[RMDB]
Chemical mapping of a 207-nucleotide RNA with 2A3. 2A3 adducts were read by reverse transcription with SuperScript II with manganese. The RNA was probed in 150 mM KOAc, 10 mM MgCl2 and 150 mM bicine (pH 8.5) at 24 C. Source: RMDB library M2RFPK, as collected in RNAgym.

RNA sequence: GGGAACGACUCGAGUAGAGUCGAAAAAUCAGCCUUCGUUCUGUAAACGGGGUUGGAUCCGACUCUCAUAGGCUCUCCAACCCAGCUCCUACUCAAUACGUCCUCGUCGUACAGAACGGUAACAUGUAAAACGAAGGCUGCUUCGGCAGCCUUCGAACUUGGUAACGUACUUCGGUACGUUACCAAGAAAAGAAACAACAACAACAAC
Reactivity to 2A3 in 0.01 (KOAc 150mM, MgCl2 10mM, bicine 150mM(pH8.5), 24C), signal-to-noise 1, nucleotides 027 to 156: a000u070c050a050g010c000c040u100u150c010g000u010u040c020u010g030u010a050a170a140c090g000g000g000g000u020u000g020g020a110u300c000c030g040a030c010u060c010u000c150a100u140a150g000g000c030u000c000u010c000c000a020a020c000c000c030a000g040c000u080c000c010u050a120c030u040c110a050a130u040a250c110g130u120c010c060u040c010g040u010c000g000u030a000c000a030g000a010a000c000g000g010u130a090a060c070a140u110g020u260a040a070a000a000c000g000a000a000g000g000c000u000g000c010u000u000c000g080g000c000a000g000c000c000u000u000c000g000a020a000